[RMDB]
The data come from the RNA Mapping Database (RMDB), library OK2TRN. An RNA of 177 nucleotides, treated with DMS and read out base by base.
RNA sequence: GGGAACGACUCGAGUAGAGUCGAAAAGGGUUGGACGGAUCAGAGGUGUCAUACGCAUUGUAAGACACGGAUUGAGUCAUUGCGGAAACGAUGUAAACAGUCAUUGGCGUAGUCCUAUUAAUUAUGCCUUCGGUUUUAAGUUCGCUUAAAACCGAAGAAAAGAAACAACAACAACAAC
Reactivity to DMS in 0.01 (KOAc 150mM, MgCl2 10mM, bicine 150mM(pH8.5), 24C), signal-to-noise 4, nucleotides 027 to 126: g000g010g000u000u010g010g020a050c070g010g020a100u010c050a080g000a240g030g010u010g010u010c020a080u000a030c040g010c260a160u010u010g020u020a050a080g010a020c010a020c040g000g000a120u000u000g000a090g010u000c040a050u000u000g010c040g010g010a090a070a130c060g000a080u020g010u010a100a050a070c100a090g000u000c030a080u000u000g010g010c040g020u000a060g000u000c020c010u000a090u010u000a040a080u000u000a070u010g010c140

DMS adducts were read by reverse transcription with MarathonRT.